[RMDB]
Structure probing data (DMS and 2A3) for a 177-nucleotide construct. Reactivities are rounded to 0.1 and cut off at 0 and 3. Values cover nucleotides 27 to 126.
RNA sequence: GGGAACGACUCGAGUAGAGUCGAAAAGCGUCUAAUGUUGACCACCGUCCUGGCGGCGGGCUUUGCCAUGCAUUUUAUCAAAGGUACCCCGCCUCCUUUGAUGCCGCCUCUUUUGUGAUGCGCGACGGACUCUAAGUCCGUUCGCGGACUUAGAGUCAAAAGAAACAACAACAACAAC
Reactivity to DMS in 0.01 (KOAc 150mM, MgCl2 10mM, bicine 150mM(pH8.5), 24C), signal-to-noise 9, nucleotides 027 to 126: g020c130g020u000c030u000a090a110u020g010u010u000g010a080c040c050a130c120c060g020u000c030c040u000g010g010c100g010g010c020g000g010g000c120u000u010u010g020c030c030a090u000g010c160a090u010u000u010u000a060u010c040a020a060a070g000g010u010a200c300c010c010c020g020c040c050u000c000c010u000u000u000g000a060u000g020c060c010g010c010c020u000c030u000u000u000u010g010u000g000a050u000g010c070g020c040g010a050c090g010
Reactivity to 2A3 in 0.01 (KOAc 150mM, MgCl2 10mM, bicine 150mM(pH8.5), 24C), signal-to-noise 7, nucleotides 027 to 126: g050c060g010u020c030u080a180a190u300g110u240u160g100a040c000c010a030c030c040g060u020c000c030u030g030g010c020g000g000c010g020g000g000c010u170u180u150g000c030c010a060u100g060c040a140u100u090u150u250a130u180c050a080a050a050g020g000u070a070c010c000c000c000g000c020c010u000c010c000u020u050u080g040a050u080g040c050c010g020c020c010u050c030u040u160u140u180g170u110g030a040u050g000c010g000c020g070a040c060g050
For 2A3, 10,001 sequencing reads were counted. As a SHAPE reagent, 2A3 marks flexible, mostly unpaired nucleotides at the ribose 2'-OH.